[RMDB]
This 177-nucleotide RNA was probed chemically with DMS and 2A3.
The data come from the RNA Mapping Database (RMDB), library RFMREP.
For 2A3, 7,377 sequencing reads were counted.
RNA sequence: GGGAACGACUCGAGUAGAGUCGAAAAUGCCCGCCUCGGCGAUCACGUCACCGGGCUCGAACUCCUCCUGGCGGAACCGGUCGGCCAGCGCGGUGAGCGCGUCCUCGUCGUCGAAUCCGCGCAGCAGCUUAUAUUAAUCCUUCGGGAUUAAUAUAAGAAAAGAAACAACAACAACAAC
Reactivity to DMS in 0.01 (KOAc 150mM, MgCl2 10mM, bicine 150mM(pH8.5), 24C), signal-to-noise 7, nucleotides 027 to 126: u010g010c010c010c010g010c100c050u010c080g010g010c020g000a100u000c200a090c090g020u000c020a060c120c030g010g000g000c030u000c080g010a060a130c090u010c020c020u000c040c020u000g010g020c030g000g010a050a120c120c020g000g010u010c030g020g000c010c070a070g020c010g020c010g020g010u010g000a190g010c020g010c020g010u000c110c090u010c120g000u000c020g020u010c020g010a130a180u000c020c010g000c020g030c030a090g010c090a110g000
Reactivity to 2A3 in 0.01 (KOAc 150mM, MgCl2 10mM, bicine 150mM(pH8.5), 24C), signal-to-noise 5, nucleotides 027 to 126: u110g020c010c010c000g000c010c040u130c070g020g020c010g060a140u180c100a050c280g020u010c000a010c030c020g000g030g020c010u020c060g060a080a040c020u010c030c010u010c010c010u020g020g020c010g010g030a040a040c040c020g030g120u160c020g030g000c020c010a050g000c010g000c000g010g050u130g070a110g170c020g000c000g040u080c010c020u100c030g110u020c000g020u010c000g010a040a060u030c010c010g030c010g020c010a010g020c010a010g010